Overview
Structure probing data (DMS and 2A3) for a 177-nucleotide construct. Source: RMDB library OK1LIB, as collected in RNAgym. The RNA was probed in 150 mM KOAc, 10 mM MgCl2 and 150 mM bicine (pH 8.5) at 24 C.

RNA sequence: GGGAACGACUCGAGUAGAGUCGAAAAGGUUUCAGUCGAAAACCUGUGGAGAGGAUGGCGUCCCAUCAGAAAUCCGUCGUCGGGACCGCCGAUGGACCAUCAGGGGACAAAUUAGGAUGAAUCAGGGCAGACUGCUCCAUUUCGAUGGAGCAGUCUGAAAAGAAACAACAACAACAAC
Reactivity to DMS in 0.01 (KOAc 150mM, MgCl2 10mM, bicine 150mM(pH8.5), 24C), signal-to-noise 2, nucleotides 027 to 126: g020g020u000u020u000c080a090g020u030c130g000a180a030a030a020c010c010u010g010u010g010g000a100g000a120g030g010a060u030g020g030c180g010u000c000c020c020a060u030c120a060g000a030a290a120u020c020c040g030u000c040g000u020c060g000g000g010a190c130c050g000c000c010g020a050u020g020g010a000c070c000a130u030c090a150g000g030g000g000a040c020a070a130a080u010u050a060g010g040a120u020g050a090a130u020c110a000g040g000g000
Reactivity to 2A3 in 0.01 (KOAc 150mM, MgCl2 10mM, bicine 150mM(pH8.5), 24C), signal-to-noise 3, nucleotides 027 to 126: g070g000u030u050u040c130a190g020u100c050g120a010a040a080a110c040c000u010g040u040g030g130a050g010a050g040g040a070u060g000g030c050g000u020c020c000c000a050u160c100a050g010a010a080a040u000c000c020g010u010c000g060u020c000g010g040g190a270c140c050g000c000c000g000a020u030g010g000a000c150c000a100u080c050a040g000g000g000g000a000c050a030a190a090u220u050a170g050g020a110u070g070a000a100u130c060a080g030g060g000